[RMDB]
RNA sequence: GGGAACGACUCGAGUAGAGUCGAAAAGAAAUAGUAAGAGCGAUUCCAAUGCAUGAUCGUCCGGAAAUUGUCAUAAACCAGAAAAGCACGCCCCUUUAGAUCAUCAGGAAUGAUCACCCAGACACGAUCAGGAUAAUGGAUUCGUCCAUUAUCCUGAAAAAGAAACAACAACAACAAC
Reactivity to 2A3 in 0.01 (KOAc 150mM, MgCl2 10mM, bicine 150mM(pH8.5), 24C), signal-to-noise 1, nucleotides 027 to 126: g020a000a040a000u150a040g070u100a110a070g000a010g050c000g020a000u040u050c010c020a090a060u090g000c010a020u110g030a070u090c040g050u000c030c000g000g000a070a180a040u070u060g050u010c020a040u080a130a070a110c050c000a050g080a020a130a010a000g000c020a000c050g020c040c000c000c000u050u140u020a040g030a020u040c000a000u020c020a030g080g100a110a000u020g010a000u040c020a000c020c000c000a050g010a010c040a010c180g120a030
Reactivity to DMS in 0.01 (KOAc 150mM, MgCl2 10mM, bicine 150mM(pH8.5), 24C), signal-to-noise 3, nucleotides 027 to 126: g000a080a110a090u000a080g020u020a040a110g010a070g020c060g010a100u010u010c040c040a050a100u010g010c080a060u000g010a040u000c060g020u000c050c020g020g010a030a070a080u000u000g000u020c030a050u000a050a070a120c040c050a120g000a040a050a060a110g000c040a040c060g010c010c000c020c020u000u000u000a090g020a020u020c020a030u010c040a150g010g020a100a040u000g010a040u000c010a200c010c010c030a090g010a090c160a040c150g000a110

An RNA of 177 nucleotides, treated with 2A3 and DMS and read out base by base.
For DMS, 2,013 sequencing reads were counted.
The 2A3 profile rests on 1,055 reads.